RNA sequence: GGGAACGACUCGAGUAGAGUCGAAAAGGUAAUGGACGACGGCGGCGUGUGGCGAACAGGGAUACCGGUAGUCAGUAUCUGGAACAUCCCAAGGGGCGGCGGAGCUAGCACCCCGACACGUUAAGGCAAAACUUCGCACGGUUCGCCGUGCGAAGAAGUAAAAGAGGAACUUCGGUUCCUCUUUUACAAAAGAAACAACAACAACAAC
Reactivity to 2A3 in 0.01 (KOAc 150mM, MgCl2 10mM, bicine 150mM(pH8.5), 24C), signal-to-noise 1, nucleotides 027 to 156: g130g030u090a120a000u080g010g000a000c030g000a020c090g000g000c000g010g000c030g000u030g000u020g020g000c020g000a040a020c050a060g010g060g000a010u020a110c020c020g010g040u060a040g060u060c070a020g070u020a070u030c060u160g030g000a070a060c020a060u000c000c000c000a020a030g000g000g010g000c050g020g010c050g030g030a070g070c020u000a010g010c020a060c000c020c000c030g020a000c030a000c080g000u090u120a040a020g000g000c040a080a090a020a000c000u000u000c000g000c010a010c000g010g000u000u030c030g020c070c020g000u020g000c020g000a010a010g000a000a000
Reactivity to DMS in 0.01 (KOAc 150mM, MgCl2 10mM, bicine 150mM(pH8.5), 24C), signal-to-noise 1, nucleotides 027 to 156: g060g010u010a020a060u020g020g000a120c010g040a070c060g010g010c040g010g020c080g050u000g040u010g050g000c080g010a050a150c080a180g000g030g000a060u000a090c010c040g050g040u000a100g020u000c080a070g000u000a010u000c020u010g030g010a100a090c060a090u000c000c000c000a160a100g010g000g050g030c080g010g010c000g050g030a150g030c000u000a080g010c030a050c000c000c020c030g030a070c060a060c030g000u000u020a060a070g010g020c100a050a050a080a100c000u000u000c000g000c000a000c000g010g000u000u020c280g030c030c000g020u000g000c000g020a000a010g020a030a070
Notes
This 207-nucleotide RNA was probed chemically with 2A3 and DMS. For 2A3 the reverse transcriptase was SuperScript II with manganese. For DMS the reverse transcriptase was MarathonRT. The reactions ran in a buffer of 150 mM KOAc, 10 mM MgCl2 and 150 mM bicine (pH 8.5), at 24 C. For 2A3, 881 sequencing reads were counted. The data come from the RNA Mapping Database (RMDB), library M2RFPK.